[RMDB]
RNA sequence: GGGAACGACUCGAGUAGAGUCGAAAACGACCGGGUCCGCGCGAUUCUGCACGCAACCAUCCAGGCCUACCGGGGUGCGCCGGCCUAUCGUCAGCGUGGCGACGUUUUUUGCCAGCUGGACCGCAUCUCUAGGAGCCUCAUUCGUGAGGCUCCUAGAAAAAGAAACAACAACAACAAC
Reactivity to 2A3 in 0.01 (KOAc 150mM, MgCl2 10mM, bicine 150mM(pH8.5), 24C), signal-to-noise 2, nucleotides 027 to 126: c010g000a010c050c000g000g000g020u000c020c040g020c020g010c000g110a060u090u020c030u060g050c040a020c040g080c010a040a110c010c000a010u090c060c060a070g070g000c020c020u000a040c000c050g010g010g000g000u040g000c010g040c020c000g000g030c010c000u140a180u110c040g050u020c000a000g000c130g100u050g050g010c060g010a060c080g030u040u040u050u000u180u200g000c020c000a050g020c010u070g020g020a020c000c000g030c030a060u040c010
Reactivity to DMS in 0.01 (KOAc 150mM, MgCl2 10mM, bicine 150mM(pH8.5), 24C), signal-to-noise 1, nucleotides 027 to 126: c170g000a040c020c000g000g040g000u000c060c110g000c100g000c030g010a030u010u040c030u000g000c020a010c020g000c090a140a080c140c000a120u000c070c040a060g000g030c070c030u030a070c130c090g010g000g000g000u000g000c020g000c040c090g000g100c080c050u000a020u010c080g000u000c050a070g010c090g040u090g000g010c020g010a040c240g090u000u020u010u000u040u030g000c000c050a130g030c000u020g010g000a180c000c030g000c070a020u000c100